The record gives the reactivity of an RNA of 207 nucleotides to 2A3. For 2A3 the reverse transcriptase was SuperScript II with manganese. Source: RMDB library M2RFPK, as collected in RNAgym.
[RMDB]
RNA sequence: GGGAACGACUCGAGUAGAGUCGAAAACGAGGUGCGGUAGGCCUCGUUAACAAACCGCAAAAAAAUAGUCACAAACGACGAAAACUACGCACUCGCAGCUUAAUAACCUGCGCUGAGCCCUUCUCCCAAAACUGAGGUAGGUUCGCCUACCUCAGAAGAAGAGUUUACACUUCGGUGUAAACUCUUCAAAAGAAACAACAACAACAAC
Reactivity to 2A3 in 0.01 (KOAc 150mM, MgCl2 10mM, bicine 150mM(pH8.5), 24C), signal-to-noise 2, nucleotides 027 to 156: c000g000a030g010g000u080g040c060g030g070u060a050g040g010c000c010u000c000g030u010u010a010a010c000a000a040a040c010c010g000c070a040a050a020a000a000a030a140u130a030g010u000c020a010c120a150a170a020c160g030a000c000g080a040a020a040a060c060u140a020c050g030c040a040c020u000c010g020c000a010g000c020u060u050a060a020u050a050a070c010c000u000g020c030g030c120u040g040a030g040c000c000c000u120u040c040u000c030c010c000a000a070a080a100c000u000g000a000g000g010u000a000g020g010u030u040c150g060c020c000u000a000c000c000u000c000a000g000a000a010